This 207-nucleotide RNA was probed chemically with DMS and 2A3.

RNA sequence: GGGAACGACUCGAGUAGAGUCGAAAACUCUUGCACAGAAUCACCUUUCUAUAAUAACCAGUGCAAGAAGGGUUAUUAUACCAUUUAAUGUGCCGAGGCCACGCGGAGUACGAUCGAUGGUACAGCAAAAACGUGAAGUACUUCGGUACUUCACGAAGAUACGUUAUUGCUUCGGCAAUAACGUAUCAAAAGAAACAACAACAACAAC
Reactivity to DMS in 0.01 (KOAc 150mM, MgCl2 10mM, bicine 150mM(pH8.5), 24C), signal-to-noise 2, nucleotides 027 to 156: c000u000c000u010u000g040c000a070c030a120g010a180a140u010c110a080c050c030u020u010u020c070u000a040u000a050a040u000a020a030c000c010a300g040u000g010c010a040a030g020a100a070g010g010g010u000u010a020u000u000a040u000a040c160c090a120u000u000u000a110a100u010g010u000g000c000c000g010a240g000g010c040c090a040c130g000c080g000g030a170g020u010a070c050g030a110u010c040g000a110u000g020g070u000a020c010a010g030c070a020a100a070a110a160c010g010u000g000a050a020g040u000a000c000u000u000c250g040g000u000a000c000u010u010c000a000c010g000a020a040
Reactivity to 2A3 in 0.01 (KOAc 150mM, MgCl2 10mM, bicine 150mM(pH8.5), 24C), signal-to-noise 6, nucleotides 027 to 156: c000u000c000u010u000g000c010a000c010a030g070a130a120u130c040a130c060c020u120u240u140c130u120a020u010a020a010u010a000a000c000c000a000g010u000g000c000a000a000g000a000a020g000g000g000u010u000a000u000u000a010u010a040c010c030a160u150u190u220a180a120u240g040u070g020c000c000g030a080g030g000c010c000a010c010g090c010g040g010a080g180u300a050c050g100a240u040c000g010a030u020g000g000u010a010c000a000g000c000a000a010a020a000a020c000g000u000g000a000a000g000u000a000c000u010u070c180g030g000u000a000c000u000u000c000a000c000g000a000a000

For 2A3, 4,842 sequencing reads were counted.
The data come from the RNA Mapping Database (RMDB), library M2RFOK.
DMS adducts were read by reverse transcription with MarathonRT.